[RMDB]
RNA sequence: GGGAACGACUCGAGUAGAGUCGAAAAGCCAGCAGCGGACGCCUGUACGCCACGCCGCUGCUGUCGGUCAGCGUUUCCGCCAUAUGGCCCCAGUAGUUGGCCUUCGGCGUGUCCGGACUGGUGACCAGCGUAAAUAUAGUUUCGACUAUAUUUACGCAAAAGAAACAACAACAACAAC
Reactivity to 2A3 in 0.01 (KOAc 150mM, MgCl2 10mM, bicine 150mM(pH8.5), 24C), signal-to-noise 9, nucleotides 027 to 126: g010c000c000a000g010c010a010g100c010g000g010a020c010g040c020c050u150g070u150a030c050g050c060c040a090c080g020c010c010g000c010u000g000c000u000g000u010c040g000g000u010c010a020g010c020g050u080u200u110c120c040g010c030c010a140u160a120u230g010g000c000c000c000c000a010g010u030a000g000u040u300g010g000c010c000u040u110c050g000g000c000g010u040g010u000c000c010g010g070a230c000u010g000g030u050g030a060c010c010a020
Reactivity to DMS in 0.01 (KOAc 150mM, MgCl2 10mM, bicine 150mM(pH8.5), 24C), signal-to-noise 8, nucleotides 027 to 126: g000c020c000a010g000c050a110g000c030g000g000a020c030g000c120c100u000g020u030a040c090g020c020c010a140c300g000c010c020g010c000u000g000c000u000g000u000c170g000g010u010c020a090g000c120g010u010u030u030c070c030g020c100c200a160u030a120u010g000g000c000c020c090c010a030g000u000a020g000u000u040g030g020c010c100u000u020c180g010g000c010g010u000g000u020c000c000g010g000a130c020u000g000g000u010g010a150c000c020a120